Record summary
Structure probing data (2A3 and DMS) for a 177-nucleotide construct. DMS (dimethyl sulfate) methylates the pairing face of unpaired adenines and cytosines. The data come from the RNA Mapping Database (RMDB), library OK1LIB. Conditions: 150 mM KOAc, 10 mM MgCl2 and 150 mM bicine (pH 8.5), 24 C. The 2A3 profile rests on 703 reads.
RNA sequence: GGGAACGACUCGAGUAGAGUCGAAAAUUGCUUGCAUGGAACUUAUCCUGUGGAAAGUUAAGGAAGAAGCGAAGGUGUAAUAAAAGAGCGAUUAACUUCUGAAAAUCUGAAGACAAUUUGUAAGGAAAUAGAAUAGACCGUUCGCGGUCUAUUCUAUAAAAGAAACAACAACAACAAC
Reactivity to 2A3 in 0.01 (KOAc 150mM, MgCl2 10mM, bicine 150mM(pH8.5), 24C), signal-to-noise 2, nucleotides 027 to 126: u150u070g000c010u010u050g030c000a090u140g070g040a010a010c030u050u020a010u110c040c030u040g050u100g050g030a090a020a020g030u070u100a020a030g020g020a000a060g020a010a000g020c000g070a030a050g070g030u120g010u050a030a040u050a060a190a010a000g060a000g000c000g030a050u140u030a150a060c000u010u010c020u010g040a000a050a080a240u020c050u090g060a030a020g030a020c070a140a120u070u120u300g040u040a040a040g030g070a010a170
Reactivity to DMS in 0.01 (KOAc 150mM, MgCl2 10mM, bicine 150mM(pH8.5), 24C), signal-to-noise 3, nucleotides 027 to 126: u000u010g010c060u000u020g000c040a030u020g010g010a080a090c090u010u040a050u000c060c050u010g020u000g000g030a040a030a140g020u000u000a090a100g000g000a110a080g000a040a050g000c090g000a060a070g000g000u000g020u010a100a060u030a130a060a070a140g000a190g050c090g090a080u000u000a070a030c040u000u000c000u000g000a080a030a070a110u010c090u010g000a090a070g000a150c130a030a090u020u000u010g000u010a080a100g000g000a030a050